[RMDB]
RNA sequence: GGGAACGACUCGAGUAGAGUCGAAAAGAUAUGGAGUACACAGCUCGAUAAGAUAUAUGUCGGAAACGACAUAUAUCUUUUGACGAGCGUGUACUCCUAAGUCAAAAGUUGGUCUUCGGACCAACAAUCAGUUAGUUAGCUUCGGCUAACUAACUGAAAAAGAAACAACAACAACAAC
Reactivity to DMS in 0.01 (KOAc 150mM, MgCl2 10mM, bicine 150mM(pH8.5), 24C), signal-to-noise 2, nucleotides 027 to 126: g000a030u010a250u010g010g000a000g000u010a010c000a020c000a140g050c000u010c010g010a210u010a020a000g010a020u000a000u010a000u000g000u000c000g000g020a030a020a150c000g050a020c010a020u010a000u000a000u000c000u010u000u000u000g020a200c130g000a000g010c000g010u000g010u000a000c000u010c010c010u000a010a030g000u000c020a130a100a160a130g000u000u000g010g010u000c010u010u010c300g030g000a020c000c000a010a000c010a070a130